Chemical mapping of a 177-nucleotide RNA with 2A3 and DMS. For DMS the reverse transcriptase was MarathonRT. Source: RMDB libraries RFM100 and RFMREP, as collected in RNAgym. For 2A3, 4,680 sequencing reads were counted.
RNA sequence: GGGAACGACUCGAGUAGAGUCGAAAAGAAGAGGACGACCAUCCCCGAUAGAGGAGGACCGGUCUUCGGUCAAGGGUAUACGAGUAGCUGCGCUCCCCUGCUAGAACCUCCAAACAAGCUCUCAAGGCAUGAAGGUAGACUUCGGUCUACCUUCAUGAAAAGAAACAACAACAACAAC
Reactivity to 2A3 in 0.01 (KOAc 150mM, MgCl2 10mM, bicine 150mM(pH8.5), 24C), signal-to-noise 4, nucleotides 027 to 126: g090a020a010g040a040g040g040a030c050g020a030c020c000a050u050c030c010c000c000g060a060u140a200g130a080g020g040a080g020g020a010c030c030g030g060u100c060u110u110c010g000g000u020c040a050a060g070g030g020u100a080u010a130c050g010a010g030u060a020g040c060u070g010c020g020c040u020c000c000c000c010u020g020c010u010a030g020a060a040c000c000u000c010c000a030a060a040c020a060a020g010c010u000c000u020c020a060a030g090g000
Reactivity to DMS in 0.01 (KOAc 150mM, MgCl2 10mM, bicine 150mM(pH8.5), 24C), signal-to-noise 5, nucleotides 027 to 126: g020a070a070g000a040g010g010a090c050g010a070c070c040a290u030c010c000c010c030g010a140u030a070g020a110g000g000a110g010g000a090c070c070g000g010u020c090u010u000c010g000g010u000c030a110a070g000g010g010u020a070u040a060c080g000a090g010u010a040g020c040u020g000c050g000c060u000c030c020c010c010u010g010c050u000a050g010a070a100c020c010u000c010c010a070a040a100c130a080a140g000c040u010c030u010c040a070a140g020g000